The record gives the reactivity of an RNA of 207 nucleotides to DMS and 2A3.

RNA sequence: GGGAACGACUCGAGUAGAGUCGAAAAGGCUGCUGCCGGAGCCGAUACCGGAAUACGAGACCUGAUGUGCGGUCGAAUGCACUGAAGUACGAAAGUACGAAGAGGUCAUACCGAGGACCGAGACUCGAUAUGCUCGAUAGAUGGAGCUUUACAUCAACAUGAGUACUGCUUUCGAGCAGUACUCAUGAAAAGAAACAACAACAACAAC
Reactivity to DMS in 0.01 (KOAc 150mM, MgCl2 10mM, bicine 150mM(pH8.5), 24C), signal-to-noise 1, nucleotides 027 to 156: g030g000c040u000g000c000u000g010c050c070g030g000a170g050c040c010g000a090u000a050c000c030g020g000a140a060u000a070c090g000a150g000a040c040c030u020g000a070u000g000u020g060c040g020g010u010c060g020a120a090u000g000c020a040c020u010g050a210a180g030u010a040c030g010a220a120a200g070u000a010c030g000a100a020g010a230g000g010u000c030a060u010a040c020c000g020a040g000g000a100c040c160g000a170g000a150c000u000c050g000a050u000a060u000g040c020u000c010g020a100u000a040g010a130u020g020g010a150g010c000u010u000u000a080c120a140u030c000a050a230
Reactivity to 2A3 in 0.01 (KOAc 150mM, MgCl2 10mM, bicine 150mM(pH8.5), 24C), signal-to-noise 2, nucleotides 027 to 156: g010g000c030u030g010c000u030g000c060c000g050g030a010g030c060c050g050a050u080a060c020c040g000g010a120a030u150a090c100g030a040g030a130c020c040u050g020a100u150g040u020g000c020g000g000u110c120g050a060a030u100g000c030a000c010u080g030a040a020g000u000a000c010g020a040a080a000g000u000a010c010g040a110a000g070a030g020g010u030c020a010u070a070c050c020g000a050g000g030a010c030c070g040a010g030a070c030u000c020g080a090u010a030u090g010c020u030c000g040a080u070a070g050a030u070g010g040a050g040c000u020u080u090a140c050a070u100c070a080a070
For DMS the reverse transcriptase was MarathonRT.